[RMDB]
RNA sequence: GGGAACGACUCGAGUAGAGUCGAAAAAGCCUAUGCCACGCCCCAAGUAGACCAAUACUGGCAGGUCAGAACGACAGGCCAGAUCAUGCUGAUACGCCAGCCGGAGGAUCAUGUGUUCAGUCCGGAAUGGCACCUGAACUACCGCCGGGUACGCCUGCUCAUUGUCCUCAUUCGUGAGGACAAUGAGAAAAGAAACAACAACAACAAC
Reactivity to 2A3 in 0.01 (KOAc 150mM, MgCl2 10mM, bicine 150mM(pH8.5), 24C), signal-to-noise 2, nucleotides 027 to 156: a000g140c060c010u090a090u130g090c000c010a050c070g000c000c000c010c010a020a040g020u040a020g030a120c100c060a060a070u070a200c020u000g000g030c000a010g050g000u000c010a030g110a190a030c090g000a000c000a000g030g000c000c000a000g030a070u070c010a050u080g070c040u070g010a070u040a260c060g000c000c000a010g000c040c000g020g000a030g010g020a070u070c070a100u190g100u030g040u180u040c050a060g170u060c010c000g060g000a110a110u080g010g000c000a040c000c030u030g010a020a020c010u000a060c010c020g020c000c000g010g000g000u020a030c040g040c020c020u040g010
An RNA of 207 nucleotides, treated with 2A3 and read out base by base. Conditions: 150 mM KOAc, 10 mM MgCl2 and 150 mM bicine (pH 8.5), 24 C. For 2A3 the reverse transcriptase was SuperScript II with manganese.